[RMDB]
RNA sequence: GGGAACGACUCGAGUAGAGUCGAAAAGGGGUCGUUACAACCGAGGCACAAGAGGUACACUGAAGCCUCCACGGUGUACUACCCACCUUGUGCUCCCCACCGGUUCGUAACGACGGAGGCACCCAAACACGGUGCAUGGUUCGCCAUGCACCGUGAACAGCUUCUAACAGUUCGCUGUUAGAAGCUGAAAAGAAACAACAACAACAAC
Reactivity to 2A3 in 0.01 (KOAc 150mM, MgCl2 10mM, bicine 150mM(pH8.5), 24C), signal-to-noise 1, nucleotides 027 to 156: g040g010g000g010u000c000g000u010u000a010c000a000a000c000c000g000a020g010g000c000a000c000a000a000g010a010g010g010u000a010c010a000c000u020g060a160a010g010c000c000u000c010c010a000c000g010g000u000g000u010a000c010u040a030c070c060c000a060c010c000u000u010g000u000g000c000u030c040c050c000c000a030c010c000g000g010u020u030c090g000u030a000a000c000g000a010c010g010g000a000g000g000c000a030c000c000c000a020a120a000c000a010c000g000g010u020g000c000a000u010g020g090u080u110c280g060c090c000a000u010g000c000a000c000c000g000u010g000a000a010
Reactivity to DMS in 0.01 (KOAc 150mM, MgCl2 10mM, bicine 150mM(pH8.5), 24C), signal-to-noise 2, nucleotides 027 to 156: g060g080g190g020u000c000g080u000u010a070c040a150a020c030c130g000a300g000g000c030a000c050a000a000g010a180g000g040u020a020c010a070c000u030g020a150a080g030c040c000u000c020c000a300c020g050g000u000g010u010a070c000u000a070c030c010c040a300c090c000u000u000g000u000g010c000u010c300c030c020c050a300c030c000g000g000u010u010c120g030u000a000a000c000g050a030c000g040g000a050g010g130c000a100c010c000c050a050a100a300c010a030c000g010g030u010g150c010a090u010g030g030u000u000c300g070c100c010a010u000g000c000a000c000c030g000u010g040a070a250